Structure probing data (2A3) for a 207-nucleotide construct. It was measured as part of the RMDB library VIROID. The RNA was probed in 150 mM KOAc, 10 mM MgCl2 and 150 mM bicine (pH 8.5) at 24 C. Reactivities are rounded to 0.1 and cut off at 0 and 3.

RNA sequence: GGGAACGACUCGAGUAGAGUCGAAAAUUCCGAGAAUUCCUUUGAUGUUUCCCAGCCAGGGAUUGUCUUCCUCAAUUUUCUUGAUUUUCUUCCUGACCUUCCGGAGGUCCCUCUCGAGUUCCUCUAUCUUCUUUCUUCCAUUCACCCACUGCUCGAGCUCGUGAGAAAAGUUCGCUUUUCUCACGAGAAAAGAAACAACAACAACAAC
Reactivity to 2A3 in 0.01 (KOAc 150mM, MgCl2 10mM, bicine 150mM(pH8.5), 24C), signal-to-noise 1, nucleotides 027 to 156: u110u000c030c010g000a100g080a090a100u080u050c030c030u150u100u050g070a080u080g100u020u050u080c020c000c000a040g040c070c140a030g000g010g060a040u050u070g030u060c080u090u050c010c050u060c050a100a100u050u090u080u080c080u050u120g060a160u140u070u090u000c030u040u060c010c030u030g060a100c010c050u090u070c040c040g020g100a040g030g000u030c050c010c000u000c000u000c000g040a010g010u010u010c000c010u000c020u010a120u120c030u040u040c030u040u140u000c000u050u000c010c030a110u020u060c010a050c040c060c030a040c070u030g000c010u030c010g010a010g020